[RMDB]
RNA sequence: GGGAACGACUCGAGUAGAGUCGAAAACGACUCACUACGGUGAGUCGACCAAUGGACUACGGUCCAUUGGAACUCGAUCGUGAGAUCGAGAGAGUCACUACGGUGACUCACUGUACUUCUACGGAAGUACAGAAGAUUGCAACUACGGUUGCAAUCAAGUUAGACGUGAGUCUAACAGAGGCGGCUACGGCCGCCUCAAGUCUAAUGCUACGGCAUUAGACACAAUUUUCUGAAAAUUUUCACAACUUGGUCGGUGACGACCAAGAAGCAUCCGGUUCGCCGGAUGCAAAAGAAACAACAACAACAAC
Reactivity to 2A3 in 0.01 (KOAc 150mM, MgCl2 10mM, bicine 150mM(pH8.5), 24C), signal-to-noise 2, nucleotides 027 to 266: c020g010a010c000u000c000a000c010u020a030c100g050g000u010g000a000g000u010c000g000a000c000c000a010a000u000g030g010a000c010u030a030c240g120g000u000c000c010a010u000u000g020g000a000a020c010u010c000g000a000u000c000g050u010g060a120g000a010u000c010g000a020g010a010g000a000g010u000c000a010c000u070a030c300g100g000u000g000a000c000u000c010a010c010u000g000u000a010c010u000u000c010u010a060c190g130g000a000a000g010u010a000c000a000g000a020a010g000a000u000u010g000c000a000a000c000u070a010c190g090g010u010u000g000c000a000a000u000c000a010a050g000u000u010a000g010a010c010g020u050g070a080g000u000c000u010a000a000c010a030g000a000g000g000c010g000g000c030u050a140c300g170g000c030c000g020c010c000u000c010a000a000g010u040c000u000a000a000u010g010c010u010a050c230g050g020c000a000u000u000a000g000a000c010a000c000a010a080u170u210u240u140c080u140g150a130a110a090a140u250u250u270u190c180a130c050a100a010c000u000u000g020g010u050c030g050g100u100g080a150c000g020a040c060c020a000a010g030a010a000

An RNA of 307 nucleotides, treated with 2A3 and read out base by base. Conditions: 150 mM KOAc, 10 mM MgCl2 and 150 mM bicine (pH 8.5), 24 C. Source: RMDB library POS240, as collected in RNAgym.